[RMDB]
RNA sequence: GGGAACGACUCGAGUAGAGUCGAAAAACACGCAAGGCCUUGCCCCCUACCUGCCGGGGCUGUCGGACCCGAAAGACGCCGCCGAGGGCUGAUGGGUGUGCCGGCGACCUCUGAGGGCGAGCAGACGCUCAAGGGUCUUAUUCGUAAGACCCUUGAGAAAAGAAACAACAACAACAAC
Reactivity to DMS in 0.01 (KOAc 150mM, MgCl2 10mM, bicine 150mM(pH8.5), 24C), signal-to-noise 3, nucleotides 027 to 126: a090c100a090c180g030c140a140a110g000g000c050c040u000u000g000c000c010c020c020c020u000a080c060c040u000g030c060c070g000g010g000g030c010u000g010u010c000g000g000a130c000c000c010g000a070a130a080g020a240c190g010c020c010g000c080c100g010a220g010g010g000c040u000g010a190u000g000g000g010u000g000u010g030c010c010g030g000c010g000a030c030c030u000c040u010g010a240g000g000g010c020g000a050g000c070a090g000a120c140g010
Reactivity to 2A3 in 0.01 (KOAc 150mM, MgCl2 10mM, bicine 150mM(pH8.5), 24C), signal-to-noise 1, nucleotides 027 to 126: a000c050a010c000g100c080a110a000g040g010c010c020u040u090g000c000c000c000c040c030u010a060c010c000u020g050c010c000g000g020g040g000c020u010g030u040c010g010g090a120c020c000c000g030a040a090a040g050a030c040g030c030c010g080c040c120g170a210g100g020g000c000u000g010a060u100g000g060g030u130g060u150g210c020c020g040g000c010g010a030c010c000u010c000u000g020a070g000g070g010c010g000a010g020c000a020g060a010c020g000